Chemical mapping of a 177-nucleotide RNA with 2A3 and DMS. 2A3 is a SHAPE reagent: it acylates the 2'-hydroxyl of flexible nucleotides of all four kinds. For 2A3 the reverse transcriptase was SuperScript II with manganese. For 2A3, 2,054 sequencing reads were counted. For DMS the reverse transcriptase was MarathonRT. It was measured as part of the RMDB library M2PK50.
RNA sequence: GGGAACGACUCGAGUAGAGUCGAAAAGAGUCACACUUCGGUGUGACUCAAAUAAGCUGACCAGCUAUGAGGUCUAGAUCGUCAUGCACAAAUAGAAUAAAAAAACCCUAAUCUUCGGAUUAGGGAACUAAUCAAAAAGGUUCGCCUUUUUGAUUAGAAAAGAAACAACAACAACAAC
Reactivity to 2A3 in 0.01 (KOAc 150mM, MgCl2 10mM, bicine 150mM(pH8.5), 24C), signal-to-noise 2, nucleotides 027 to 126: g020a000g000u000c000a000c000a000c000u040u100c170g000g000u010g000u010g000a000c000u000c000a000a010a000u020a000a010g030c020u010g020a020c000c020a000g000c040u080a110u160g150a060g080g030u000c030u020a040g040a160u080c090g030u030c050a050u120g030c050a040c020a070a070a000u150a130g190a100a070u300a200a130a020a010a020a050a080c010c020c000u000a010a010u020c000u080u060c270g080g010a000u000u000a010g020g000g000a000a000
Reactivity to DMS in 0.01 (KOAc 150mM, MgCl2 10mM, bicine 150mM(pH8.5), 24C), signal-to-noise 2, nucleotides 027 to 126: g000a040g010u000c000a020c000a020c000u010u000c200g000g020u000g030u000g010a010c000u000c010a020a050a070u010a080a120g010c010u010g000a100c050c020a130g000c060u010a060u010g020a150g010g010u000c030u000a070g000a080u000c170g000u000c050a020u000g020c070a060c090a030a090a090u000a090g010a120a090u060a020a000a100a070a070a050a120c000c000c000u010a020a000u000c000u000u010c260g000g010a000u000u000a010g010g000g000a000a010